This 207-nucleotide RNA was probed chemically with DMS and 2A3.

RNA sequence: GGGAACGACUCGAGUAGAGUCGAAAAACCCUGACAACCUCCUCCUGGUGGUGGAACCCAACCAGAAGUCACAGCUCAAGGGAACCAUUGAUCCAGGCCAUGUGGACCAGCCUCCCAGGGCACAGAGCAGGGUGAAAAAGGAUAGAGAGUGAGUGUAACGAUUACGAGUAUUCGUACUCGUAAUCGUAAAAGAAACAACAACAACAAC
Reactivity to DMS in 0.01 (KOAc 150mM, MgCl2 10mM, bicine 150mM(pH8.5), 24C), signal-to-noise 2, nucleotides 027 to 156: a070c000c000c010u020g010a230c070a100a060c030c020u000c030c010u000c020c030u030g010g000u000g000g070u000g000g000a110a290c020c020c010a090a170c060c050a070g010a130a080g010u000c070a130c090a160g000c030u010c020a190a300g020g030g000a050a220c020c050a080u000u000g060a070u010c030c000a100g030g020c050c010a110u010g000u010g010g000a030c000c010a140g000c040c000u000c010c030c000a180g030g010g080c040a110c070a080g010a200g030c030a030g010g020g050u000g000a020a090a050a080a100g020g000a110u000a070g000a090g000a050g040u000g000a060g010u000g000u010a100
Reactivity to 2A3 in 0.01 (KOAc 150mM, MgCl2 10mM, bicine 150mM(pH8.5), 24C), signal-to-noise 3, nucleotides 027 to 156: a000c010c010c010u010g060a030c050a130a090c020c020u030c000c000u040c010c000u010g000g010u020g000g000u030g010g010a020a020c020c010c010a030a090c040c010a010g050a110a020g120u200c070a080c080a180g060c020u030c070a060a080g010g020g010a000a000c010c010a030u040u100g080a050u050c010c000a000g040g060c010c040a140u130g020u070g010g010a060c050c050a030g020c000c010u020c010c000c000a000g000g000g000c020a030c090a050g030a000g040c040a020g000g010g010u000g030a030a040a010a010a000g040g010a030u080a030g050a010g020a010g040u080g050a020g060u130g010u100a040